[RMDB]
RNA sequence: GGGAACGACUCGAGUAGAGUCGAAAAGAUAUGGAUGUGGUGAGGUCGAUAUACCAGCAUCGAUCGUGACUGGUUCGGAAACGAACUUCACGGGAGCUGAAUAUCGACCUCACCACAUCCUAAGUCACGAUAAUUCGGACUUCGGUCCGAAUUAUCGAAAAGAAACAACAACAACAAC
Reactivity to DMS in 0.01 (KOAc 150mM, MgCl2 10mM, bicine 150mM(pH8.5), 24C), signal-to-noise 1, nucleotides 027 to 126: g040a080u000a300u000g000g010a020u010g040u050g000g020u000g010a020g020g000u000c000g050a000u020a000u000a170c270c000a010g040c000a300u000c180g000a110u040c000g000u000g020a070c300u010g010g000u010u010c000g000g000a080a040a240c020g000a030a010c000u000u000c020a010c000g030g000g000a010g000c000u020g000a100a010u000a000u010c040g020a020c000c010u000c000a000c000c000a010c010a000u010c000c000u000a020a050g020u000c020a210